[RMDB]
The data come from the RNA Mapping Database (RMDB), library M2PK50. An RNA of 177 nucleotides, treated with DMS and 2A3 and read out base by base. For DMS, 5,079 sequencing reads were counted. The reactions ran in a buffer of 150 mM KOAc, 10 mM MgCl2 and 150 mM bicine (pH 8.5), at 24 C.
RNA sequence: GGGAACGACUCGAGUAGAGUCGAAAAGCGGAGAUGUUCGCAUCUCCGCAAAUCCCUGGAUGCAGCGAGUUAAAACGGAUACGUUGGCAACUAUCCAUCGCAAAAGUAUUAGCUUCGGCUAAUACAACAAACUUAAGGUGUUCGCACCUUAAGUUUGAAAAGAAACAACAACAACAAC
Reactivity to DMS in 0.01 (KOAc 150mM, MgCl2 10mM, bicine 150mM(pH8.5), 24C), signal-to-noise 5, nucleotides 027 to 126: g000c000g020g010a020g010a010u000g010u000u010c210g030c010a000u000c000u010c000c000g020c000a000a020a100u000c010c000c000u010g000g020a080u010g020c150a090g000c050g010a040g020u000u020a060a050a110a110c160g010g000a060u000a030c130g010u000u000g020g000c160a100a050c050u000a020u010c030c000a110u000c040g010c070a090a090a080a120g000u000a010u000u000a000g010c000u000u010c200g040g000c000u000a000a000u010a010c000a080a180
Reactivity to 2A3 in 0.01 (KOAc 150mM, MgCl2 10mM, bicine 150mM(pH8.5), 24C), signal-to-noise 3, nucleotides 027 to 126: g020c010g010g010a000g010a000u010g020u080u110c160g020c100a010u000c010u020c010c000g000c000a000a000a000u000c000c000c010u020g130g010a060u120g040c100a050g000c020g040a030g040u180u240a090a070a030a060c060g010g010a040u040a090c110g020u040u080g190g040c030a030a010c010u020a030u000c010c000a050u040c040g000c030a040a060a050a090g010u010a000u010u000a000g000c000u030u030c200g070g000c000u000a010a000u000a010c000a010a020
Overview:
For 2A3, 4,553 sequencing reads were counted.